[RMDB]
RNA sequence: GGGAACGACUCGAGUAGAGUCGAAAAGCGACGUGCGCGUCGAUCGCUUCAGCGGCAUCGGCUCCACCUUCGCGGAUCGGAAUUUCGGCAUCGGCAUGACGUGCACGCAGCCGGCCGGCACGUACGACAGGGAUUAAUCCUUCGGGAUUAAUCCCUGAAAAGAAACAACAACAACAAC
Reactivity to 2A3 in 0.01 (KOAc 150mM, MgCl2 10mM, bicine 150mM(pH8.5), 24C), signal-to-noise 1, nucleotides 027 to 126: g110c020g070a020c020g040u010g000c040g000c010g010u010c000g010a080u020c030g020c000u100u160c030a050g040c070g060g000c030a050u010c010g030g030c000u010c000c020a040c020c040u070u130c100g000c170g060g000a110u110c080g040g100a150a150u010u180u110c010g030g000c050a070u110c010g010g050c050a060u070g070a100c030g010u020g000c070a020c040g020c010a010g000c000c040g000g010c060c030g020g000c010a000c030g080u100a070c020g080a050
Reactivity to DMS in 0.01 (KOAc 150mM, MgCl2 10mM, bicine 150mM(pH8.5), 24C), signal-to-noise 2, nucleotides 027 to 126: g000c020g000a070c300g010u000g000c080g020c050g000u000c000g000a050u010c200g020c010u000u000c250a160g050c110g000g010c050a020u000c030g010g010c000u030c050c020a050c010c120u000u000c120g020c090g010g000a050u010c040g020g000a060a150u000u000u020c050g040g030c040a090u010c050g050g030c060a120u010g010a050c050g000u000g010c040a050c040g020c060a120g000c030c010g000g020c020c020g020g000c050a020c070g020u000a100c060g030a200